RNA sequence: GGGAACGACUCGAGUAGAGUCGAAAACGGGGACCUUGGUACAGGCAGGCCGGGGAUUCCCCUCUUUAACACCAGGCUCGGCACGCACAUCGCGACGGCCAAUGGUUUCGGGAACCCCAGUACAGGCCUUAGUCCUUGUUUUCGAACAAGGACUAAGAAAAGAAACAACAACAACAAC
Reactivity to 2A3 in 0.01 (KOAc 150mM, MgCl2 10mM, bicine 150mM(pH8.5), 24C), signal-to-noise 9, nucleotides 027 to 126: c030g000g000g010g020a010c000c010u010u040g040g020u120a160c050a060g050g080c040a030g050g010c020c010g020g000g010g010a090u060u090c000c010c020c000u030c020u020u060u060a040a020c030a010c010c000a010g010g020c060u090c210g050g030c180a040c130g020c010a060c020a260u180c180g000c010g030a060c020g020g010c000c010a030a090u050g010g010u020u050u110c040g010g000g020a040a050c010c000c000c000a000g030u070a050c030a050g070g020c000
Reactivity to DMS in 0.01 (KOAc 150mM, MgCl2 10mM, bicine 150mM(pH8.5), 24C), signal-to-noise 7, nucleotides 027 to 126: c100g000g010g010g000a090c030c040u000u010g010g010u010a070c100a040g010g020c060a080g010g010c020c010g000g000g020g000a150u020u000c000c000c000c080u020c050u020u010u020a100a090c190a040c020c020a080g000g000c020u030c040g000g000c130a070c030g020c050a100c220a130u040c140g000c000g010a080c030g000g000c000c000a090a090u020g000g010u000u000u020c290g000g000g000a040a060c030c000c000c020a090g020u010a080c100a100g000g000c050

Conditions: 150 mM KOAc, 10 mM MgCl2 and 150 mM bicine (pH 8.5), 24 C. Chemical mapping of a 177-nucleotide RNA with 2A3 and DMS. It was measured as part of the RMDB libraries RFM100 and RFMREP.